[RMDB]
RNA sequence: GGGAACGACUCGAGUAGAGUCGAAAACGCUGGGCACUCAUAGCGUUAAGGAAUAGUAGAGCAACAGCCUACUGAAGCGCGCACGGUAGGACAUGCUCUACUAUUCCCAUACGCUAUAGUGCCUGUGCUGAAGCGCGCACGGCAACCGAAAGGUGCGGUGUAAUACUGUGUUCGCACAGUAUUACACAAAAGAAACAACAACAACAAC
Reactivity to DMS in 0.01 (KOAc 150mM, MgCl2 10mM, bicine 150mM(pH8.5), 24C), signal-to-noise 3, nucleotides 027 to 156: c050g040c020u000g020g030g030c020a050c010u000c130a020u000a020g020c010g040u000u010a100a070g000g000a040a040u000a020g020u000a030g020a050g030c000a150a180c090a180g030c000c010u020a010c010u010g010a050a070g030c030g010c020g000c020a300c020g010g020u000a040g020g010a030c030a250u000g030c000u000c010u010a000c000u000a020u010u000c000c000c050a080u000a010c020g020c010u010a010u000a010g000u000g010c000c010u010g000u000g020c020u000g010a060a060g020c020g020c020g000c030a300c050g000g010c040a060a080c050c050g000a140a100a160g000g020u000g020c020g020
Reactivity to 2A3 in 0.01 (KOAc 150mM, MgCl2 10mM, bicine 150mM(pH8.5), 24C), signal-to-noise 6, nucleotides 027 to 156: c050g000c020u050g000g000g000c010a000c010u110c120a020u000a000g000c020g020u090u130a250a230g000g000a000a000u000a010g010u000a010g010a010g000c020a030a120c070a160g040c000c000u010a010c010u030g070a210a040g030c030g000c010g010c050a030c000g010g000u000a000g000g030a040c050a110u090g000c000u000c000u000a000c000u000a000u000u000c000c000c000a020u050a000c000g000c000u000a000u000a010g000u010g000c000c000u000g000u010g000c010u040g030a120a040g010c010g000c000g000c010a010c010g040g000c030a080a060c020c020g060a100a040a020g060g000u020g010c040g050